[RMDB]
RNA sequence: GGGAACGACUCGAGUAGAGUCGAAAAUGACUCAUAGUGCAGCAGGUGCGGAUAACGCCCACCGGAUGGUAAUAACGAAUAGGAUGACCUUAGUACCUCCACAUAACAUAAUAACAAAAGGUCACAAUGGGCAAUCCGCAGCCAAGCUCCCAUAUGUCCUUGUUCACAACUUCGGUUGUGAACAAGGAAAAGAAACAACAACAACAAC
Reactivity to 2A3 in 0.01 (KOAc 150mM, MgCl2 10mM, bicine 150mM(pH8.5), 24C), signal-to-noise 1, nucleotides 027 to 156: u140g020a000c020u000c070a030u040a220g100u070g010c000a020g000c020a040g000g010u000g000c000g000g000a050u110a200a070c100g000c020c000c020a080c010c000g030g000a060u130g010g100u090a090a190u100a100a000c140g020a110a180u080a110g150g000a120u050g020a010c010c000u010u000a000g030u010a010c000c020u130c100c090a030c020a080u180a120a040c040a040u260a300a050u090a060a050c040a150a100a010a000g000g000u010c050a000c000a100a060u040g000g000g000c040a080a000u000c020c020g010c000a000g060c000c000a080a000g030c000u030c000c000c000a050u050a100u100g060u010